[RMDB]
RNA sequence: GGGAACGACUCGAGUAGAGUCGAAAAGGGGAUUUGGAGCAAGCAGCUUAGAUUCCCCAGAGUCUCCUUUCUUCACCUGCAAGUCUGGAAGGAUAAUGCUUGCCUCCUGCAGUUAUUUAGAAGGCUAAAUAACAUCAAAGCACCUAAUAGCCUGCCAUGCUAAUGCAGGAUUCGUCCUGCAUUAGCAAAAAGAAACAACAACAACAAC
Reactivity to DMS in 0.01 (KOAc 150mM, MgCl2 10mM, bicine 150mM(pH8.5), 24C), signal-to-noise 1, nucleotides 027 to 156: g010g040g030g020a070u000u020u000g050g020a130g030c000a080a060g030c000a090g000c050u010u000a090g010a230u010u010c000c050c020c020a090g020a090g020u010c030u000c030c020u000u000u000c060u020u000c020a080c060c030u050g020c140a110a130g020u010c090u020g020g010a130a050g040g010a100u000a080a060u010g050c050u020u010g000c070c050u000c010c080u000g020c040a140g050u000u000a040u000u020u000a020g020a110a080g020g010c000u010a140a020a020u000a020a040c010a140u000c110a060a090a080g010c000a060c060c080u010a090a170u000a050g000c010c000u000g000c080c050a200
Reactivity to 2A3 in 0.01 (KOAc 150mM, MgCl2 10mM, bicine 150mM(pH8.5), 24C), signal-to-noise 1, nucleotides 027 to 156: g030g050g020g000a040u050u120u150g000g000a040g010c000a020a020g010c010a010g010c040u130u140a050g000a120u060u010c010c000c000c000a000g000a010g010u000c010u040c020c010u000u040u030c030u100u030c040a060c020c020u050g050c050a060a160g010u030c010u010g030g020a090a090g020g020a030u020a110a090u270g000c000u000u000g010c040c030u020c000c000u000g020c020a050g000u030u020a040u010u040u050a070g030a160a020g070g000c020u040a000a080a050u070a070a060c020a030u100c150a050a120a100g000c010a040c060c010u070a150a100u020a110g000c010c020u050g040c090c050a060
An RNA of 207 nucleotides, treated with DMS and 2A3 and read out base by base. The reactions ran in a buffer of 150 mM KOAc, 10 mM MgCl2 and 150 mM bicine (pH 8.5), at 24 C. For 2A3, 755 sequencing reads were counted.